[RMDB]
RNA sequence: GGGAACGACUCGAGUAGAGUCGAAAAUAAAGUAGGAGCAAAUGGAUUUUCUGCUUGGCGGUAUAGCACGUUUGAGUUUUUCAGUCGUGUCUAUGUUCAGGUUUAUGAUAUGCUGUGGUUGAUUCUGGAUACAAACAGUGUUCGCACUGUUUGUAUCAAAAGAAACAACAACAACAAC
Reactivity to 2A3 in 0.01 (KOAc 150mM, MgCl2 10mM, bicine 150mM(pH8.5), 24C), signal-to-noise 1, nucleotides 027 to 126: u120a030a080a000g060u040a040g000g060a000g000c040a000a110a290u220g030g070a100u100u080u150u100c060u070g010c000u020u010g000g030c040g070g030u070a020u040a030g000c020a010c000g000u010u080u070g060a050g020u190u290u030u170u000c000a030g030u030c010g000u000g060u040c010u040a030u070g030u060u050c010a010g090g000u050u050u100a060u120g030a020u030a050u270g050c040u000g030u000g040g000u000u010g020a100u020u020c020u020g040
Conditions: 150 mM KOAc, 10 mM MgCl2 and 150 mM bicine (pH 8.5), 24 C. Chemical mapping of a 177-nucleotide RNA with 2A3. The 2A3 profile rests on 849 reads. Reactivities are given for positions 27 through 126.